Description: An RNA of 177 nucleotides, treated with 2A3 and DMS and read out base by base. Source: RMDB libraries RFM100 and RFMREP, as collected in RNAgym. As a SHAPE reagent, 2A3 marks flexible, mostly unpaired nucleotides at the ribose 2'-OH. The reactions ran in a buffer of 150 mM KOAc, 10 mM MgCl2 and 150 mM bicine (pH 8.5), at 24 C.
[RMDB]
RNA sequence: GGGAACGACUCGAGUAGAGUCGAAAAAGUAUUGCAGUUGAGAUGAUGGGUAGUCAUUUUGAAGUUUGCAUAGUACUCCAUAACAGGUAGAGUAGAAAGUAAAUUCGUUAGGGUAUUUAAAAGACUGUACUAUGUGGUCUUUCGAGACCACAUAGUAAAAAGAAACAACAACAACAAC
Reactivity to 2A3 in 0.01 (KOAc 150mM, MgCl2 10mM, bicine 150mM(pH8.5), 24C), signal-to-noise 3, nucleotides 027 to 126: a000g120u110a050u090u080g040c010a000g020u080u070g010a030g020a030u070g000a010u020g020g050g160u230a080g040u030c030a040u050u030u020u090g130a080a050g030u080u100u010g010c000a010u030a010g040u000a030c010u000c060c000a080u050a120a090c070a050g030g180u110a040g020a040g080u040a040g030a050a020a020g030u100a020a110a110u060u010c000g020u020u130a060g040g030g000u080a070u030u150u100a090a140a030a000g060a000c030u060g000
Reactivity to DMS in 0.01 (KOAc 150mM, MgCl2 10mM, bicine 150mM(pH8.5), 24C), signal-to-noise 4, nucleotides 027 to 126: a080g010u020a040u000u010g010c030a060g000u010u000g010a070g000a050u000g000a030u010g000g030g010u010a100g020u010c020a030u010u000u010u000g000a070a050g000u020u030u000g000c040a080u010a080g010u000a040c020u010c010c040a080u020a090a070c160a060g000g010u020a050g000a060g010u010a030g000a100a060a090g010u010a020a030a060u010u010c050g000u010u000a060g010g010g010u010a050u020u010u010a050a050a050a060g000a050c080u020g000